An RNA of 177 nucleotides, treated with 2A3 and DMS and read out base by base.
RNA sequence: GGGAACGACUCGAGUAGAGUCGAAAACGUAUCUAUUUGAUCAAGAGAUUGAUAAAGUCAAUGUGAUAUAUGACGCAUACUGUCUCAAAAUUGGUGGCGAACCAACGAUGGAUGAAUUUUUAAGACAUCAAGCAUUAAAAUUCGUUUUAAUGCUUGAAAAAGAAACAACAACAACAAC
Reactivity to 2A3 in 0.01 (KOAc 150mM, MgCl2 10mM, bicine 150mM(pH8.5), 24C), signal-to-noise 9, nucleotides 027 to 126: c020g060u040a010u000c020u010a090u050u070u160g100a070u080c060a110a050g040a020g010a080u030u090g050a070u130a180a110a010g030u020c010a030a030u080g060u070g200a020u030a010u020a040u190g040a010c030g020c050a020u080a220c020u050g020u020c000u000c000a060a130a080a110u050u030g020g010u010g050g080c110g050a030a010c010c000a020a020c040g030a020u060g020g050a020u040g080a090a130u070u050u040u070u190a070a040g080a030c010a020
Reactivity to DMS in 0.01 (KOAc 150mM, MgCl2 10mM, bicine 150mM(pH8.5), 24C), signal-to-noise 8, nucleotides 027 to 126: c110g010u010a030u010c010u010a050u010u010u010g010a080u000c120a060a060g000a110g000a110u010u000g000a110u030a080a120a130g010u010c010a010a030u000g010u010g010a070u020a050u010a070u010g000a060c090g020c100a080u030a070c070u020g000u000c000u010c070a030a040a110a100u000u010g000g010u010g010g030c160g000a130a090c020c010a020a070c130g000a090u020g000g000a070u010g020a040a050u030u030u020u010u020a040a120g000a090c180a090
Conditions: 150 mM KOAc, 10 mM MgCl2 and 150 mM bicine (pH 8.5), 24 C. DMS adducts were read by reverse transcription with MarathonRT.